[RMDB]
RNA sequence: GGGAACGACUCGAGUAGAGUCGAAAAAGAAAGAGCGUAUUCGCGUCUUGACGUGAAUGAGGCUAGACUGUAGGCUCUAGUGGGAUAGUAACGCUCACUCCCAAAACGCUAUUCCACAGUCAGUUAAUAUUUGCUAGAACUUCGGUUCUAGCAAAUAAAAAGAAACAACAACAACAAC
Reactivity to 2A3 in 0.01 (KOAc 150mM, MgCl2 10mM, bicine 150mM(pH8.5), 24C), signal-to-noise 1, nucleotides 027 to 126: a010g080a010a020a020g030a020g000c030g020u040a040u000u030c010g000c010g000u070c060u140u250g120a010c010g000u000g000a010a090u120g060a030g020g140c010u060a020g040a150c060u110g080u220a010g090g000c010u030c000u080a040g000u020g000g000g000a000u000a040g020u010a060a000c010g000c040u030c030a040c050u040c000c010c030a050a070a000a000c060g000c000u000a000u000u010c020c010a000c010a000g080u080c010a020g010u020u100a190a030
Reactivity to DMS in 0.01 (KOAc 150mM, MgCl2 10mM, bicine 150mM(pH8.5), 24C), signal-to-noise 2, nucleotides 027 to 126: a090g030a120a080a060g000a010g010c020g020u000a160u000u000c000g030c000g000u000c090u010u000g010a040c000g040u000g010a020a040u000g000a120g010g030c030u000a050g010a040c030u000g000u010a070g000g000c070u000c100u000a090g010u000g000g020g000a010u000a010g010u010a120a050c040g000c000u020c010a080c090u000c000c000c010a040a040a090a090c150g010c000u000a010u000u000c000c010a010c030a180g000u020c110a080g000u000u010a110a150
Structure probing data (2A3 and DMS) for a 177-nucleotide construct. The RNA was probed in 150 mM KOAc, 10 mM MgCl2 and 150 mM bicine (pH 8.5) at 24 C. It was measured as part of the RMDB library M2PK90.